[RMDB]
RNA sequence: GGGAACGACUCGAGUAGAGUCGAAAAGAUAUGGACGGUAUACAACAACAGCGUGUGUAUCGGAAACGAUACCACGACAUGUUGUCAUACCGUCCUAAGUCAAAAGCGCCCGGUUCGCCGGGCGCAAUCAUAACUAAUUGUUCGCAAUUAGUUAUGAAAAAGAAACAACAACAACAAC
Reactivity to 2A3 in 0.01 (KOAc 150mM, MgCl2 10mM, bicine 150mM(pH8.5), 24C), signal-to-noise 2, nucleotides 027 to 126: g030a020u070a030u130g010g000a000c020g000g020u010a010u010a030c070a070a000c010a060a010c020a040g070c010g010u040g030u060g010u020a000u020c000g020g000a080a050a000c010g000a000u000a000c000c000a000c000g040a000c010a040u070g000u000u020g010u010c010a000u000a020c000c020g000u000c000c000u000a000a010g000u000c000a000a000a030a110g020c010g010c080c130c250g050g030u110u060c300g050c110c010g050g080g030c010g000c010a000a010
Reactivity to DMS in 0.01 (KOAc 150mM, MgCl2 10mM, bicine 150mM(pH8.5), 24C), signal-to-noise 4, nucleotides 027 to 126: g000a030u010a300u000g010g000a000c000g000g010u000a010u000a060c100a090a020c020a050a080c230a160g010c010g030u000g020u030g010u000a000u000c010g010g000a100a080a170c020g010a010u000a000c000c000a000c010g010a040c100a140u010g000u000u010g000u000c280a020u010a000c000c000g000u000c000c010u000a010a090g010u010c040a090a100a270a280g010c040g050c000c000c000g010g010u000u010c150g030c010c000g030g000g020c010g000c010a000a010
About this RNA: This 177-nucleotide RNA was probed chemically with 2A3 and DMS. For DMS, 4,875 sequencing reads were counted. The reactions ran in a buffer of 150 mM KOAc, 10 mM MgCl2 and 150 mM bicine (pH 8.5), at 24 C. For DMS the reverse transcriptase was MarathonRT. The 2A3 profile rests on 6,093 reads. The data come from the RNA Mapping Database (RMDB), library TTRDES.